[RMDB]
RNA sequence: GGGAACGACUCGAGUAGAGUCGAAAAUCGCCUACACGGGCAUGAGUGGAUGCCUGAGGUUGAUAUUGGUGUGUCUUCCUCAAAUGCUUCUCACACCUUGAUUUUUGAGACAGGGUCCCUCACUGAGCCUGAAGCAACUGGCUGACCAGUGAGCCCACUAUGGGUAGCCAUUCGUGGCUACCCAUAGAAAAGAAACAACAACAACAAC
Reactivity to 2A3 in 0.01 (KOAc 150mM, MgCl2 10mM, bicine 150mM(pH8.5), 24C), signal-to-noise 1, nucleotides 027 to 156: u100c000g000c000c000u100a080c090a040c110g080g010g000c030a010u090g030a080g090u130g040g080a000u020g070c050c020u020g030a030g050g050u080u160g040a040u080a020u150u090g000g060u140g050u000g010u010c050u050u000c000c030u050c020a070a130a200u130g030c010u040u130c020u030c040a060c000a020c000c010u000u050g090a200u180u080u070u120u150g110a040g010a030c080a070g000g000g030u060c030c000c010u010c000a000c020u010g010a020g000c030c000u010g060a090a020g080c040a050a140c030u010g010g000c000u020g060a090c100c000a000g000u000g010a010g000c000c000c000a010
Conditions: 150 mM KOAc, 10 mM MgCl2 and 150 mM bicine (pH 8.5), 24 C. An RNA of 207 nucleotides, treated with 2A3 and read out base by base. Reactivities are given for positions 27 through 156. The data come from the RNA Mapping Database (RMDB), library OK3TST. The 2A3 profile rests on 588 reads.